[RMDB]
An RNA of 177 nucleotides, treated with 2A3 and DMS and read out base by base. The data come from the RNA Mapping Database (RMDB), library OK2TRN. The reactions ran in a buffer of 150 mM KOAc, 10 mM MgCl2 and 150 mM bicine (pH 8.5), at 24 C. 2A3 adducts were read by reverse transcription with SuperScript II with manganese.

RNA sequence: GGGAACGACUCGAGUAGAGUCGAAAAUACAGGUACGAGUACGAUCCUAGGCAUCUAGAUCCAUGUAGCUAGCGUACGUACGAUCCGAUCGCAUAGGAUCGCGUACGCCAUGACAUGCUAGCUGUAGCCAGAAGAUGUGAUUCGUCACAUCUUCUGGAAAAGAAACAACAACAACAAC
Reactivity to 2A3 in 0.01 (KOAc 150mM, MgCl2 10mM, bicine 150mM(pH8.5), 24C), signal-to-noise 5, nucleotides 027 to 126: u160a020c060a020g140g040u090a050c030g030a020g030u040a110c030g010a020u010c020c010u050a050g140g000c020a030u010c000u030a030g020a080u050c070c010a010u030g020u040a030g030c060u010a000g000c010g000u010a000c010g010u020a080c070g000a010u000c010c010g040a110u200c160g000c280a130u120a220g000g000a000u000c000g000c000g000u000a000c000g000c000c000a050u020g000a010c000a010u030g010c000u020a010g000c010u030g020u080a050g080
Reactivity to DMS in 0.01 (KOAc 150mM, MgCl2 10mM, bicine 150mM(pH8.5), 24C), signal-to-noise 7, nucleotides 027 to 126: u010a070c100a090g010g010u010a060c050g000a070g020u000a090c040g000a080u000c030c010u000a100g020g000c040a040u000c020u000a020g000a150u010c200c040a030u000g000u000a070g000c050u010a100g000c010g010u000a000c010g020u000a070c130g010a010u000c000c010g000a140u010c230g010c180a200u000a110g000g000a010u000c010g000c010g000u000a000c010g010c010c010a060u000g010a030c030a020u000g000c010u000a010g010c050u000g000u000a100g000